The data come from the RNA Mapping Database (RMDB), libraries RFM100 and RFMREP. The record gives the reactivity of an RNA of 177 nucleotides to DMS and 2A3. The reactions ran in a buffer of 150 mM KOAc, 10 mM MgCl2 and 150 mM bicine (pH 8.5), at 24 C. For DMS the reverse transcriptase was MarathonRT.
RNA sequence: GGGAACGACUCGAGUAGAGUCGAAAAGGGCGGUGGUGGGCCCACCCCCUCAUAGCCGCAGGACUCUGGAUCAUGAAGGUGUUGAGGCCUCAAACUAGACAGGAAGUGGAGGGAUUCUGGAUGUUCCACUAUAAGAUGCCUUCGGGCAUCUUAUAGUAAAAGAAACAACAACAACAAC
Reactivity to DMS in 0.01 (KOAc 150mM, MgCl2 10mM, bicine 150mM(pH8.5), 24C), signal-to-noise 5, nucleotides 027 to 126: g020g000g010c140g020g010u010g010g000u010g000g020g020c060c020c000a050c010c020c010c000c000u000c090a070u010a110g020c060c020g000c090a090g000g000a090c060u010c040u010g000g010a070u010c070a070u020g020a110a070g010g020u000g010u010u010g010a100g000g000c010c000u000c100a070a080a080c070u020a040g000a090c120a080g000g000a100a080g000u010g000g000a100g020g010g000a090u010u000c050u000g000g000a110u010g000u010u010c020c040
Reactivity to 2A3 in 0.01 (KOAc 150mM, MgCl2 10mM, bicine 150mM(pH8.5), 24C), signal-to-noise 5, nucleotides 027 to 126: g020g010g020c110g020g020u030g000g070u120g010g110g000c000c000c000a010c000c000c000c000c000u020c020a130u110a020g040c010c010g030c020a030g010g050a050c020u020c030u100g060g000a080u070c040a070u150g080a060a020g040g000u060g050u120u130g040a060g030g050c010c000u080c020a120a190a080c040u070a050g060a080c030a040g060g040a070a050g040u060g060g050a070g020g020g020a020u080u040c010u040g040g040a070u040g050u080u020c010c010